[RMDB]
RNA sequence: GGGAACGACUCGAGUAGAGUCGAAAACAGAUGCCGUUCGCGGCAUCUGAAAGUGACGGUGAAAAAUGGCCAAGGUGCCAGCUACCACCGACACAGGGCGCUAAAGAGGAUUCUUCGGAAUCCUCAAUCUUGUCUAACUGUUCGCAGUUAGACAAGAAAAAGAAACAACAACAACAAC
Reactivity to 2A3 in 0.01 (KOAc 150mM, MgCl2 10mM, bicine 150mM(pH8.5), 24C), signal-to-noise 2, nucleotides 027 to 126: c000a010g020a000u010g000c000c020g030u060u090c270g000c000g120g000c010a000u000c000u000g000a030a020a000g010u000g010a000c000g020g030u040g060a080a040a020a020a030u020g000g020c050c050a300a260g220g090u290g060c000c020a000g000c000u050a040c020c000a010c000c020g020a000c000a000c000a010g010g060g000c110g020c120u200a150a090a010g000a020g010g000a010u000u000c000u010u060c180g000g000a000a000u000c020c000u000c000a000a000
Reactivity to DMS in 0.01 (KOAc 150mM, MgCl2 10mM, bicine 150mM(pH8.5), 24C), signal-to-noise 3, nucleotides 027 to 126: c010a000g020a000u000g020c010c000g020u020u010c150g020c030g000g000c000a010u000c000u000g000a020a070a100g020u000g000a130c010g010g000u000g000a020a060a070a220a110u000g000g020c000c010a180a120g020g020u020g020c010c000a010g020c100u000a190c200c010a010c010c000g010a060c010a000c040a100g010g010g030c160g000c150u000a040a100a080g000a020g000g000a020u000u000c000u000u000c190g040g000a010a000u000c000c000u000c010a000a040
This 177-nucleotide RNA was probed chemically with 2A3 and DMS.
Conditions: 150 mM KOAc, 10 mM MgCl2 and 150 mM bicine (pH 8.5), 24 C.
It was measured as part of the RMDB library M2PK50.
The DMS profile rests on 2,112 reads.
2A3 adducts were read by reverse transcription with SuperScript II with manganese.